An RNA of 177 nucleotides, treated with DMS and 2A3 and read out base by base. Source: RMDB libraries RFM100 and RFMREP, as collected in RNAgym. The reactions ran in a buffer of 150 mM KOAc, 10 mM MgCl2 and 150 mM bicine (pH 8.5), at 24 C.
[RMDB]
RNA sequence: GGGAACGACUCGAGUAGAGUCGAAAAUUCGCUGAAUUAUGAUUGCGUGGCACGCUCGGUCAAGCUCGUGUGGUAUCACACACAUGGCGCCAGGUCACACCAAAAGCUCCUCCGUCACCUCCACAUCCAUCUUAGUUCUUUUCGAAGAACUAAGAUGAAAAGAAACAACAACAACAAC
Reactivity to DMS in 0.01 (KOAc 150mM, MgCl2 10mM, bicine 150mM(pH8.5), 24C), signal-to-noise 9, nucleotides 027 to 126: u010u000c050g030c050u010g000a080a090u020u010a070u010g010a110u010u010g000c050g020u010g000g020c040a070c070g000c030u000c060g000g010u010c070a060a120g010c060u000c100g010u000g010u010g000g010u010a090u030c140a070c070a040c030a050c050a070u010g000g010c050g010c050c040a050g000g010u000c070a060c080a110c060c050a030a050a080a120g010c030u000c020c010u000c020c020g010u010c040a060c030c010u010c020c020a050c110a090u020c110
Reactivity to 2A3 in 0.01 (KOAc 150mM, MgCl2 10mM, bicine 150mM(pH8.5), 24C), signal-to-noise 9, nucleotides 027 to 126: u050u030c020g010c080u070g070a110a080u180u080a120u230g130a120u070u160g020c040g010u040g030g000c030a010c080g030c010u030c040g040g020u050c040a060a040g020c020u040c090g010u020g010u030g010g060u150a120u300c040a040c000a000c000a000c000a100u080g040g000c020g010c020c000a020g020g030u040c020a030c010a020c050c020a030a070a030a030g020c010u010c000c000u020c010c000g030u020c010a030c020c010u020c010c010a040c000a050u030c020